An RNA of 177 nucleotides, treated with 2A3 and DMS and read out base by base.

[RMDB]
RNA sequence: GGGAACGACUCGAGUAGAGUCGAAAACAGGGGAUGACUGUCGGAAGAUGGUCAGUCCCGGGUGCAUAAGGAGUGGUGGAUGGUUCAGGACCGAAAGGUAGCAGACAAAAGCCACCGCGCGGUGCAGUUAACUUCUUGAUUUCGAUCAAGAAGUUAAAAAAGAAACAACAACAACAAC
Reactivity to 2A3 in 0.01 (KOAc 150mM, MgCl2 10mM, bicine 150mM(pH8.5), 24C), signal-to-noise 7, nucleotides 027 to 126: c060a020g020g000g000g030a010u000g000a010c000u020g000u020c000g040g140a100a030g000a080u000g000g000u000c000a000g060u040c000c000c000g010g050g010u070g000c020a060u060a180a180g140g010a090g050u020g000g010u010g010g030a070u080g080g000u030u040c030a010g010g010a010c010c010g030a040a020a010g000g000u010a010g010c010a010g010a010c010a010a200a030a010g010c000c000a000c000c000g000c010g010c020g050g000u010g000c010a030g000
Reactivity to DMS in 0.01 (KOAc 150mM, MgCl2 10mM, bicine 150mM(pH8.5), 24C), signal-to-noise 9, nucleotides 027 to 126: c060a150g010g010g010g010a100u000g000a010c000u000g010u000c000g000g100a140a140g000a000u000g010g000u000c010a010g010u010c000c000c000g000g010g020u010g010c020a030u010a120a110g010g010a160g030u000g000g020u000g010g010a090u010g010g000u010u000c010a300g000g000a010c000c000g000a090a080a140g000g000u000a010g000c010a240g000a010c020a060a060a090a140g000c000c000a000c000c000g000c020g010c060g010g000u000g000c010a060g010